[RMDB]
RNA sequence: GGGAACGACUCGAGUAGAGUCGAAAAGAGGUGACAACAUGCAAUGGAAUUUAAUAAAGUUGAGAAAAGAAAGAAAGUGUACUCAAGAAGAUUUAGCAAACCUCUUGAAUAUAUCAACUGAAGGUUACUACCUAAUGACUUUCGAGUCAUUAGGUAGAAAAGAAACAACAACAACAAC
Reactivity to DMS in 0.01 (KOAc 150mM, MgCl2 10mM, bicine 150mM(pH8.5), 24C), signal-to-noise 6, nucleotides 027 to 126: g000a110g000g020u000g010a080c050a060a090c090a080u000g000c070a070a110u000g010g010a110a080u010u010u010a060a090u010a060a080a080g010u000u010g010a060g010a100a060a090a130g000a100a090a070g010a080a100a120g010u000g010u000a010c070u010c010a010a010g000a050a040g010a070u000u000u010a120g010c170a110a050a040c040c010u000c010u000u010g000a020a020u000a030u010a050u000c020a030a110c040u000g010a060a060g010g000u000u010a120
Reactivity to 2A3 in 0.01 (KOAc 150mM, MgCl2 10mM, bicine 150mM(pH8.5), 24C), signal-to-noise 4, nucleotides 027 to 126: g040a010g030g020u040g020a040c030a060a000c030a070u130g020c020a020a100u070g030g050a070a080u120u160u140a150a100u170a100a170a020g010u000u030g010a010g020a080a120a040a030g090a020a110a020g050a060a090a050g060u050g030u050a030c030u010c010a000a010g040a040a010g020a040u060u140u090a020g000c020a020a000a070c000c000u000c000u010u010g000a030a000u070a000u020a010u040c020a020a030c010u060g040a060a010g100g010u070u060a040

The record gives the reactivity of an RNA of 177 nucleotides to DMS and 2A3. The RNA was probed in 150 mM KOAc, 10 mM MgCl2 and 150 mM bicine (pH 8.5) at 24 C. The 2A3 profile rests on 4,438 reads. Reactivities are rounded to 0.1 and cut off at 0 and 3.